Chemical mapping of a 177-nucleotide RNA with DMS and 2A3. The RNA was probed in 150 mM KOAc, 10 mM MgCl2 and 150 mM bicine (pH 8.5) at 24 C. For DMS the reverse transcriptase was MarathonRT. Source: RMDB libraries RFM100 and RFMREP, as collected in RNAgym.
RNA sequence: GGGAACGACUCGAGUAGAGUCGAAAAAUGGCGGUCCGAAACCCAUACUUUUCACUUUCGAACGGGUGAGUGUACUAUCACUUUGGAAGACGUCUAUAUGUUACUCGGCUUACCUUUUGGAGGUUCAAUGUUCACGGAAAUUCGUUUCCGUGAACAUAAAAGAAACAACAACAACAAC
Reactivity to DMS in 0.01 (KOAc 150mM, MgCl2 10mM, bicine 150mM(pH8.5), 24C), signal-to-noise 4, nucleotides 027 to 126: a070u040g000g010c090g000g010u010c000c030g000a070a070a120c100c040c030a150u010a060c120u000u000u040u010c090a080c080u010u010u000c100g020a100a100c240g000g000g000u000g000a050g000u020g010u020a060c130u010a050u000c080a070c060u020u000u020g000g030a070a050g010a140c070g020u000c050u020a100u010a040u030g000u000u030a050c060u000c020g010g010c020u000u000a070c030c010u010u000u000u010g010g000a160g000g000u010u000c090a080
Reactivity to 2A3 in 0.01 (KOAc 150mM, MgCl2 10mM, bicine 150mM(pH8.5), 24C), signal-to-noise 6, nucleotides 027 to 126: a000u090g020g000c020g000g020u040c020c000g050a080a040a030c010c010c000a040u080a140c090u070u100u050u100c060a040c010u070u150u150c060g090a110a030c080g010g000g020u030g020a010g020u080g020u050a130c080u100a060u190c020a020c000u040u050u070g030g010a050a000g090a080c000g030u020c060u020a130u010a020u120g120u060u040a040c020u010c020g030g010c010u030u040a070c020c000u050u040u070u100g120g010a040g000g000u030u070c020a030